[RMDB]
RNA sequence: GGGAACGACUCGAGUAGAGUCGAAAAGUGACGAUCGGCCAGUGCAGUGCGCGUACAUGUGGCGCUAUGGCCAGGCGCUAUAUCGUCAGUGGCGCACGGAUCUGCGCAGCGAGUACACUGCGAGUACCUUCCAGGAUUGAUUCGUCAAUCCUGGAAGAAAAGAAACAACAACAACAAC
Reactivity to DMS in 0.01 (KOAc 150mM, MgCl2 10mM, bicine 150mM(pH8.5), 24C), signal-to-noise 6, nucleotides 027 to 126: g030u000g020a040c030g000a150u000c020g000g000c010c000a050g010u000g010c190a160g010u000g010c010g020c010g030u000a250c070a090u000g030u000g010g000c010g010c060u000a010u000g000g020c010c040a120g000g010c140g000c010u000a020u000a010u000c030g010u000c020a080g020u000g000g000c000g010c000a020c020g000g010a080u000c010u000g010c190g010c000a040g000c030g000a070g000u000a110c010a020c010u000g010c180g010a120g010u000a110c090
Reactivity to 2A3 in 0.01 (KOAc 150mM, MgCl2 10mM, bicine 150mM(pH8.5), 24C), signal-to-noise 4, nucleotides 027 to 126: g030u010g010a000c020g030a120u030c000g010g000c010c010a000g010u020g050c060a010g000u010g020c010g020c010g070u180a070c030a050u280g120u060g260g000c010g000c000u010a030u030g020g000c020c020a020g100g040c100g000c030u000a010u000a000u030c010g020u010c010a020g040u030g040g000c000g000c010a010c010g000g030a020u020c030u020g010c050g000c070a000g020c010g010a000g000u040a140c010a000c030u040g030c050g050a040g050u080a080c010
Chemical mapping of a 177-nucleotide RNA with DMS and 2A3. Source: RMDB library OK2TRN, as collected in RNAgym. For DMS, 10,227 sequencing reads were counted. Conditions: 150 mM KOAc, 10 mM MgCl2 and 150 mM bicine (pH 8.5), 24 C.